[RMDB]
Chemical mapping of a 177-nucleotide RNA with DMS and 2A3. For 2A3, 1,783 sequencing reads were counted. The RNA was probed in 150 mM KOAc, 10 mM MgCl2 and 150 mM bicine (pH 8.5) at 24 C. For DMS, 1,286 sequencing reads were counted.
RNA sequence: GGGAACGACUCGAGUAGAGUCGAAAAGAUAUGGAUGAGCGAAGAACGGUUGGUCGAAGAACUCGGAAACGAGGGAGACCGGACCGGGAGCUCAUCCUAAGUCAAAACCGCACGUUCGCGUGCGGAAUCACAGGUUUUAGUUCGCUAAAACCUGUGAAAAAGAAACAACAACAACAAC
Reactivity to DMS in 0.01 (KOAc 150mM, MgCl2 10mM, bicine 150mM(pH8.5), 24C), signal-to-noise 2, nucleotides 027 to 126: g010a050u000a300u010g000g000a040u010g020a030g020c010g050a140a140g000a150a240c040g010g000u010u000g020g000u010c010g030a080a110g010a180a220c000u010c000g000g000a180a110a130c000g000a010g000g010g000a090g020a030c010c000g030g030a010c000c000g010g020g000a080g000c000u000c000a000u010c010c000u000a020a030g000u000c030a050a020a080a210c000c000g010c000a000c000g000u000u010c300g010c030g010u000g010c010g000g000a020a060
Reactivity to 2A3 in 0.01 (KOAc 150mM, MgCl2 10mM, bicine 150mM(pH8.5), 24C), signal-to-noise 1, nucleotides 027 to 126: g030a040u040a050u200g020g000a010u030g010a030g000c030g190a300a020g050a160a050c000g010g010u020u040g030g010u010c000g090a250a060g020a030a050c020u020c010g000g010a040a060a010c000g010a010g000g020g050a030g000a010c000c070g010g020a000c010c000g030g050g000a020g000c000u000c000a000u000c000c000u000a020a000g000u010c010a000a000a080a180c010c000g000c010a000c000g020u080u070c300g000c000g190u010g000c020g010g000a000a030